[RMDB]
RNA sequence: GGGAACGACUCGAGUAGAGUCGAAAAGCGCCGGGAGACCACCUGGCGCAAGGGACCGCAGCCACGUGCGUGUCCGCGGCUCGCGUCUUGCAGAUGGUGUGCAAGGCUGGGAAACCAGGCAAGUUCGUGCCUGAUAUCAAUUCGUUGAUAUCAGGCAAAAAGAAACAACAACAACAAC
Reactivity to 2A3 in 0.01 (KOAc 150mM, MgCl2 10mM, bicine 150mM(pH8.5), 24C), signal-to-noise 2, nucleotides 027 to 126: g030c020g010c040c000g010g050g010a110g050a050c030c040a040c020c060u000g010g030c010g000c000a000a020g070g020g010a060c000c030g020c010a010g090c080c100a100c090g120u090g060c040g040u230g010u040c010c000g010c020g010g010c000u000c040g060c020g040u010c010u010u020g000c000a020g020a300u230g070g140u230g020u020g060c010a010a020g030g000c000u010g050g000g000a070a040a030c030c010a040g080g000c040a050a040g070u080u150c050g030
Reactivity to DMS in 0.01 (KOAc 150mM, MgCl2 10mM, bicine 150mM(pH8.5), 24C), signal-to-noise 4, nucleotides 027 to 126: g020c010g020c000c010g000g000g000a150g020a140c170c140a170c010c010u000g000g010c010g020c000a010a030g000g000g010a060c030c010g010c020a050g010c040c150a030c180g000u010g010c040g000u020g010u000c010c010g010c070g020g010c020u000c030g010c090g010u010c000u000u000g000c000a040g000a180u000g000g010u010g020u000g010c010a030a050g000g010c010u000g010g010g000a090a100a130c020c010a050g010g010c050a090a100g010u000u010c070g010
An RNA of 177 nucleotides, treated with 2A3 and DMS and read out base by base.
The data come from the RNA Mapping Database (RMDB), library OK2TST.
Conditions: 150 mM KOAc, 10 mM MgCl2 and 150 mM bicine (pH 8.5), 24 C.
The DMS profile rests on 5,239 reads.